[RMDB]
RNA sequence: GGGAACGACUCGAGUAGAGUCGAAAAGCAGAAGUCGUCGUACUGCCGCUGGUCCCGGCAGCAGGUCUGCCCGCAGACGGCACUUCUGCCACUGAUCUGGCGGUAGAGCUGAACGGCAUAACGUAUCCGUGUUGGGUAAUUUCGAUUACCCAACACGAAAAGAAACAACAACAACAAC
Reactivity to 2A3 in 0.01 (KOAc 150mM, MgCl2 10mM, bicine 150mM(pH8.5), 24C), signal-to-noise 3, nucleotides 027 to 126: g060c030a030g040a190a010g080u050c030g010u000c000g000u040a110c020u000g000c000c000g010c030u020g000g020u020c030c060c040g010g000c000a000g000c020a020g040g100u050c110u090g020c000c010c020g080c010a060g060a220c000g030g000c000a000c010u020u000c000u000g000c000c000a020c050u050g030a050u060c020u050g020g000c010g000g030u020a010g010a040g000c070u060g020a140a020c010g020g000c010a020u090a080a010c060g030u040a070u060c050
Reactivity to DMS in 0.01 (KOAc 150mM, MgCl2 10mM, bicine 150mM(pH8.5), 24C), signal-to-noise 4, nucleotides 027 to 126: g010c040a060g000a110a100g010u000c060g040u010c040g020u000a210c020u000g000c000c030g010c030u000g010g040u000c060c300c040g010g020c010a020g010c070a060g010g000u010c090u000g020c020c040c090g000c250a060g010a170c220g000g000c010a080c030u000u000c000u000g000c000c030a050c100u000g010a040u000c040u010g010g010c000g000g000u000a030g000a240g030c050u010g020a060a040c040g020g010c030a060u010a060a120c110g020u000a080u010c060
Structure probing data (2A3 and DMS) for a 177-nucleotide construct. The DMS profile rests on 3,413 reads. 2A3 adducts were read by reverse transcription with SuperScript II with manganese.